[RMDB]
Chemical mapping of a 207-nucleotide RNA with 2A3. Reactivities are given for positions 27 through 156. The reactions ran in a buffer of 150 mM KOAc, 10 mM MgCl2 and 150 mM bicine (pH 8.5), at 24 C.

RNA sequence: GGGAACGACUCGAGUAGAGUCGAAAAAGAUAAGCAGCUAACGUCCGCCGGAGGUGCCCACGGCCUCCGAGUCGGGCGCCAACCCACGUGGGGCACCGAAAGUAAGGUCGCCUGAGCCUUACUUUUGGGUCAAAUCUCAGGCUGGGGAAGAAAAAGCGAAUAUACUAAGCUUCGGCUUAGUAUAUUCAAAAGAAACAACAACAACAAC
Reactivity to 2A3 in 0.01 (KOAc 150mM, MgCl2 10mM, bicine 150mM(pH8.5), 24C), signal-to-noise 1, nucleotides 027 to 156: a010g120a090u270a070a050g020c030a010g020c070u100a190a080c040g010u000c000c010g000c020c000g000g000a010g000g000u010g000c000c000c000a010c010g000g000c000c010u000c010c000g010a010g060u220c000g000g000g000c010g010c000c000a010a040c000c010c010a060c020g000u000g000g020g000g000c140a010c010c000g010a000a000a000g000u000a000a000g020g000u010c040g010c020c000u010g000a000g000c010c000u000u010a000c010u020u010u000u000g000g000g000u020c030a050a020a030u020c000u000c000a000g000g000c000u000g000g010g010g000a090a050g070a090a160a000a020a000g100c080